This 207-nucleotide RNA was probed chemically with DMS and 2A3. The 2A3 profile rests on 5,240 reads.
[RMDB]
RNA sequence: GGGAACGACUCGAGUAGAGUCGAAAAGCAUUGCAACUUCGGUUGCAAUGCAAAAAGAUAUGGAAGCACAACAUCGUUGAAACACCCAUCGGAAACGAUGGUGUGUGGAGAUGGUGCUUCCUAAGUCAAAAAAUCCCAGCACUUCGGUGCUGGGAAACAUGUUUUGUACGUUCGCGUACAAAACAUGAAAAGAAACAACAACAACAAC
Reactivity to DMS in 0.01 (KOAc 150mM, MgCl2 10mM, bicine 150mM(pH8.5), 24C), signal-to-noise 2, nucleotides 027 to 156: g030c000a010u010u000g010c000a010a000c000u000u000c300g040g010u000u000g010c000a020a000u000g020c000a010a020a030a110a100g010a090u000a200u000g000g000a030a040g010c000a010c010a090a210c020a030u000c010g000u000u000g000a300a230a040c010a030c000c000c000a010u010c010g010g000a130a120a130c000g010a010u000g000g010u010g020u000g030u010g010g000a300g000a050u000g000g040u000g010c010u000u000c000c000u000a000a070g000u020c020a000a030a170a160a060a100u010c000c000c010a040g010c010a000c010u000u010c300g070g010u000g020c000u000g010g000g000a000a000a050
Reactivity to 2A3 in 0.01 (KOAc 150mM, MgCl2 10mM, bicine 150mM(pH8.5), 24C), signal-to-noise 3, nucleotides 027 to 156: g010c010a000u010u010g000c000a000a000c010u050u060c230g110g010u000u000g000c000a010a000u000g000c000a010a010a000a020a000g000a000u000a000u000g000g000a010a000g040c000a000c010a120a300c000a180u010c010g200u250u300g120a020a000a000c000a000c000c010c000a000u000c000g000g000a000a000a000c000g000a000u000g000g010u050g000u000g000u000g020g020a200g000a000u000g010g000u000g000c000u000u000c000c000u000a000a000g000u000c030a000a010a000a010a090a090u020c000c000c010a000g000c000a000c030u080u110c250g100g000u000g000c000u000g000g000g000a010a000a030